Source: RMDB library OK2TST, as collected in RNAgym. An RNA of 177 nucleotides, treated with DMS and 2A3 and read out base by base. DMS adducts were read by reverse transcription with MarathonRT. The 2A3 profile rests on 1,625 reads.

RNA sequence: GGGAACGACUCGAGUAGAGUCGAAAAAGGAAAACGUCAUGUCGAUCUAUCCGAUUCUGUCCGCCCUGCUCACCUAUCCCGAGCAGCCGCUGCUCGACGCGCUGCCCGAGAUCGAGCGCGCGCUCGAGAUAGGGCAUCCCUUCGGGGAUGCCCUAUCAAAAGAAACAACAACAACAAC
Reactivity to DMS in 0.01 (KOAc 150mM, MgCl2 10mM, bicine 150mM(pH8.5), 24C), signal-to-noise 3, nucleotides 027 to 126: a100g010g010a060a070a080a090c220g010u000c060a050u020g010u000c070g020a070u010c020u000a150u000c030c020g010a080u000u000c060u000g000u010c000c040g030c060c050c020u000g010c040u000c040a060c060c040u000a090u010c020c030c030g010a050g000c020a060g010c090c040g020c040u000g020c020u000c020g000a050c040g020c040g000c060u010g010c020c010c010g000a220g010a120u010c010g020a040g010c010g020c050g030c060g000c060u000c020g000a080
Reactivity to 2A3 in 0.01 (KOAc 150mM, MgCl2 10mM, bicine 150mM(pH8.5), 24C), signal-to-noise 2, nucleotides 027 to 126: a000g140g050a060a100a020a020c060g060u060c080a110u140g100u150c050g010a060u040c040u080a090u050c030c010g020a020u060u040c030u040g040u010c000c020g000c010c020c020u010g070c010u030c030a090c000c020u070a090u050c050c010c060g000a010g030c030a030g070c090c020g030c050u180g000c010u030c030g010a020c010g000c010g030c050u110g040c010c040c010g100a120g000a100u090c010g020a010g040c010g000c000g000c000g000c030u000c010g030a070